Background:
Chemical mapping of a 207-nucleotide RNA with DMS and 2A3. The RNA was probed in 150 mM KOAc, 10 mM MgCl2 and 150 mM bicine (pH 8.5) at 24 C. For 2A3 the reverse transcriptase was SuperScript II with manganese. DMS adducts were read by reverse transcription with MarathonRT. Source: RMDB library OK3TST, as collected in RNAgym. The 2A3 profile rests on 3,157 reads.
[RMDB]
RNA sequence: GGGAACGACUCGAGUAGAGUCGAAAAUUUUUGCUGCGAACGUAGAGUAAUUUCUGUCUUCUCCUUUAAGGCGGCAGAGGGACAAAGCUCGGCGAACGUCAUGCUACCAAUUGCCUCCGGUUUUAGCUCGCCAGAAAUUAGCUUAUUAAGGGCAUCGAACACUAUGAACAUUCGUGUUCAUAGUGUUAAAAGAAACAACAACAACAAC
Reactivity to DMS in 0.01 (KOAc 150mM, MgCl2 10mM, bicine 150mM(pH8.5), 24C), signal-to-noise 4, nucleotides 027 to 156: u000u010u000u000u000g020c020u000g030c000g000a080a150c060g010u010a080g010a110g020u010a070a090u000u000u000c030u000g000u000c020u000u000c030u000c020c030u000u000u000a060a100g000g010c110g020g020c030a080g010a160g000g020g010a100c070a030a080a140g020c030u010c060g050g030c040g020a050a090c040g010u010c060a100u000g010c040u000a150c030c020a050a150u000u000g010c020c010u000c030c010g000g010u000u000u010u000a060g000c050u010c050g020c040c030a090g010a050a040a090u000u000a060g020c040u000u000a090u000u000a100a110g010g010g040c040a130u010c050g000
Reactivity to 2A3 in 0.01 (KOAc 150mM, MgCl2 10mM, bicine 150mM(pH8.5), 24C), signal-to-noise 4, nucleotides 027 to 156: u090u090u030u070u120g020c000u030g010c010g060a090a040c030g020u080a050g010a010g080u080a030a080u030u100u010c030u000g030u010c020u090u020c020u050c030c010u060u160u160a100a020g060g000c040g010g000c030a000g010a040g020g010g000a030c070a040a100a010g000c020u040c070g040g000c020g060a050a080c030g050u080c080a040u160g010c000u060a060c020c030a070a120u040u060g010c000c000u020c050c030g020g000u000u070u000u040a020g000c010u010c080g030c010c000a030g050a020a070a060u090u060a030g030c020u060u030a030u050u090a150a110g030g000g000c020a040u060c080g020